[RMDB]
RNA sequence: GGGAACGACUCGAGUAGAGUCGAAAACUUACAGUAACAUGACUAGAUCUAGACAUGAGCCGGUGGCAAUGCUUAUACAUGGUGCUCCAGGAACAGGGAAAUCACUAGCUACAGAGAUAAUUGGUAGAACAUAACCGGGAUUCGUCCCGGUUAUGUUAAAAGAAACAACAACAACAAC
Reactivity to DMS in 0.01 (KOAc 150mM, MgCl2 10mM, bicine 150mM(pH8.5), 24C), signal-to-noise 4, nucleotides 027 to 126: c030u020u010a120c160a060g030u030a080a120c080a050u010g000a070c010u000a030g010a110u040c070u010a080g010a070c040a020u000g020a190g000c050c080g020g010u000g000g000c050a070a070u010g010c060u010u020a050u060a110c110a080u010g010g010u000g000c050u000c020c050a070g010g000a040a030c110a070g030g000g000a030a030a060u030c040a060c040u000a110g020c020u010a050c100a050g000a070g000a060u010a030a080u010u010g000g000u020a040g020
Reactivity to 2A3 in 0.01 (KOAc 150mM, MgCl2 10mM, bicine 150mM(pH8.5), 24C), signal-to-noise 4, nucleotides 027 to 126: c020u060u120a140c040a110g070u120a080a020c060a060u070g040a040c000u070a040g020a180u050c030u040a000g090a080c030a100u050g020a010g070c020c000g090g010u070g010g000c000a000a060u060g000c040u100u110a040u050a100c030a040u080g060g000u040g020c000u000c030c030a030g050g050a100a060c020a060g000g000g050a000a140a000u060c020a030c050u040a050g070c050u070a010c020a000g060a000g010a120u050a180a080u220u090g030g000u040a030g030
This 177-nucleotide RNA was probed chemically with DMS and 2A3. DMS adducts were read by reverse transcription with MarathonRT. Reactivities are given for positions 27 through 126. For 2A3, 2,022 sequencing reads were counted. The DMS profile rests on 6,027 reads. It was measured as part of the RMDB library OK1LIB. The RNA was probed in 150 mM KOAc, 10 mM MgCl2 and 150 mM bicine (pH 8.5) at 24 C.